[RMDB]
Description:
Chemical mapping of a 177-nucleotide RNA with DMS and 2A3. For 2A3, 3,365 sequencing reads were counted.
RNA sequence: GGGAACGACUCGAGUAGAGUCGAAAAGAUAUGGAGUAGAGGACAUGUGCUAACAUCGGAAACGAUGUGUAGCGAAUCUACCCACCUACUCCUAAGUCAAAUCCCUUACGCUUCGGCGUAAGGGAAACUGUUCAUCCUACUUCGGUAGGAUGAACAGAAAAGAAACAACAACAACAAC
Reactivity to DMS in 0.01 (KOAc 150mM, MgCl2 10mM, bicine 150mM(pH8.5), 24C), signal-to-noise 2, nucleotides 027 to 126: g010a010u010a060u010g000g020a010g010u000a010g000a160g000g010a150c150a100u010g030u000g010c000u000a030a030c000a000u000c000g020g000a010a000a050c010g010a010u000g000u000g010u000a000g010c000g030a100a120u010c130u020a160c040c030c020a180c220c000u000a000c000u000c000c000u030a010a140g000u000c030a090a090a150u000c000c000c010u000u000a000c000g010c000u010u010c180g030g000c000g020u000a020a010g000g010g000a010a000a020
Reactivity to 2A3 in 0.01 (KOAc 150mM, MgCl2 10mM, bicine 150mM(pH8.5), 24C), signal-to-noise 2, nucleotides 027 to 126: g000a000u030a020u060g000g010a020g010u020a020g030a130g070g080a080c100a300u300g160u260g120c000u000a000a020c000a000u000c000g010g010a010a010a020c010g010a000u000g020u030g150u010a000g010c000g000a010a120u060c050u110a100c000c000c000a150c020c010u000a010c000u020c000c000u010a010a000g000u010c040a000a060a300u070c000c010c000u010u000a000c000g020c000u030u060c280g190g000c000g000u000a000a000g000g010g000a030a000a000

The reactions ran in a buffer of 150 mM KOAc, 10 mM MgCl2 and 150 mM bicine (pH 8.5), at 24 C.